[RMDB]
RNA sequence: GGGAACGACUCGAGUAGAGUCGAAAAACACAGCUUCCAUGGGCUGCUCACUCCAAUUCUGAUGGAGAGGGCAUUUAUGACUCUGUCCGUUGGUUUGUUUUCUCACUGAAGAGGAACAUAGAUGCACUCGAGAUUCUUAUUUCGAUAAGAAUCUCGAAAAAGAAACAACAACAACAAC
Reactivity to 2A3 in 0.01 (KOAc 150mM, MgCl2 10mM, bicine 150mM(pH8.5), 24C), signal-to-noise 2, nucleotides 027 to 126: a000c030a000c010a010g000c030u100u020c100c010a100u090g010g040g000c040u030g060c030u100c030a060c040u000c000c000a050a090u240u120c060u240g110a100u090g020g030a020g020a020g050g030g020c000a010u030u110u020a110u090g020a060c010u030c030u050g090u040c000c000g060u040u040g070g000u060u070u050g090u120u040u110u020c040u010c000a040c060u200g070a150a080g000a050g070g000a050a010c010a000u060a050g110a060u110g010c020a030c100
Reactivity to DMS in 0.01 (KOAc 150mM, MgCl2 10mM, bicine 150mM(pH8.5), 24C), signal-to-noise 4, nucleotides 027 to 126: a070c150a140c070a030g000c020u000u000c080c100a070u000g020g000g020c060u000g010c040u000c040a130c020u000c020c030a030a120u010u010c140u010g010a130u010g000g000a030g010a080g010g000g000c010a020u000u010u000a060u000g000a120c030u010c030u000g000u000c030c070g000u010u000g020g000u010u010u000g000u020u000u010u000c020u010c050a110c130u000g010a110a060g010a040g000g000a070a070c040a060u000a060g000a050u010g020c100a100c150